[RMDB]
Annotation
An RNA of 177 nucleotides, treated with DMS and 2A3 and read out base by base.

RNA sequence: GGGAACGACUCGAGUAGAGUCGAAAAUUUGAAGUAGCUACUCAAAGUGCCUCUGCCCCUCAGGGGGACUCUCGAGGUUUGGUACAAUAUCUAACCUUGUAUCAACAUUCAUCAAACACAUUCCGAAAUACUCGAGGUAUUUCGAUACCUCGAGUAUAAAAGAAACAACAACAACAAC
Reactivity to DMS in 0.01 (KOAc 150mM, MgCl2 10mM, bicine 150mM(pH8.5), 24C), signal-to-noise 2, nucleotides 027 to 126: u000u000u020g000a080a020g010u020a090g020c150u010a110c030u000c040a040a040a030g040u000g040c050c000u000c000u000g010c140c060c040c080u000c090a120g000g000g040g010g040a030c060u000c100u000c170g020a020g020g000u010u000u000g010g010u000a020c030a030a020u000a100u000c210u010a150a110c230c070u000u000g010u010a030u010c010a010a040c090a110u010u000c060a050u020c090a020a060a090c120a080c180a180u010u030c020c000g020a100a180
Reactivity to 2A3 in 0.01 (KOAc 150mM, MgCl2 10mM, bicine 150mM(pH8.5), 24C), signal-to-noise 1, nucleotides 027 to 126: u050u000u060g020a020a020g030u070a000g010c060u130a030c000u030c090a170a060a000g080u050g100c000c010u010c000u050g030c000c000c000c010u040c020a030g000g040g000g010g030a020c020u030c010u060c170g000a000g000g100u000u030u000g000g010u010a020c020a020a010u050a030u220c130u070a030a110c010c030u000u000g020u030a020u010c000a070a030c010a000u020u090c000a030u070c010a050a160a020c040a020c020a220u030u050c000c010g070a120a140
For 2A3 the reverse transcriptase was SuperScript II with manganese.